[RMDB]
RNA sequence: GGGAACGACUCGAGUAGAGUCGAAAACUGACCAUCAACGACGGCGAUGUCGCAUUCAGUGUCGACGUCACACCGUCGUUCCGAUACCGGGGCAUCUGAGUUCCCAACGGGGACAACACGAAAGGACUGUCACAGUGACAGAAAAGGUACUGAACUAAGACCUGUAGUUAUUCGUAACUACAGGUCUAAAAGAAACAACAACAACAAC
Reactivity to DMS in 0.01 (KOAc 150mM, MgCl2 10mM, bicine 150mM(pH8.5), 24C), signal-to-noise 2, nucleotides 027 to 156: c030u000g030a190c040c060a170u000c050a000a000c000g060a030c020g000g000c040g020a070u000g000u030c010g000c020a120u010u020c120a190g010u000g030u030c020g000a040c000g000u010c000a070c110a090c060c000g000u000c000g000u000u000c060c000g000a110u010a080c040c060g000g010g010g000c070a110u000c070u010g010a170g010u000u000c010c020c000a100a120c010g000g010g050g030a170c050a050a060c070a170c010g000a080a110a150g000g010a160c010u000g010u000c020a080c190a120g040u010g020a050c000a040g000a010a050a130a040g070g010u000a090c040u000g010a130a120c040u010a140
Reactivity to 2A3 in 0.01 (KOAc 150mM, MgCl2 10mM, bicine 150mM(pH8.5), 24C), signal-to-noise 3, nucleotides 027 to 156: c050u070g050a070c010c010a040u090c030a020a010c000g000a000c010g000g030c030g020a010u020g010u000c000g000c010a090u240u210c150a110g180u090g090u120c010g000a000c000g020u000c010a030c030a000c030c000g000u000c000g000u030u000c000c010g040a040u070a050c030c050g000g000g030g000c010a020u030c050u080g070a020g000u030u030c000c000c000a010a030c140g010g000g000g020a010c020a070a040c020a050c090g070a100a040a000g080g000a000c010u010g010u000c010a030c010a170g150u080g110a000c000a020g100a020a090a020a000g030g020u060a030c060u050g070a020a050c020u150a070
Conditions: 150 mM KOAc, 10 mM MgCl2 and 150 mM bicine (pH 8.5), 24 C. The record gives the reactivity of an RNA of 207 nucleotides to DMS and 2A3. The DMS profile rests on 2,646 reads. It was measured as part of the RMDB library OK3TST. For 2A3, 1,595 sequencing reads were counted. 2A3 is a SHAPE reagent: it acylates the 2'-hydroxyl of flexible nucleotides of all four kinds.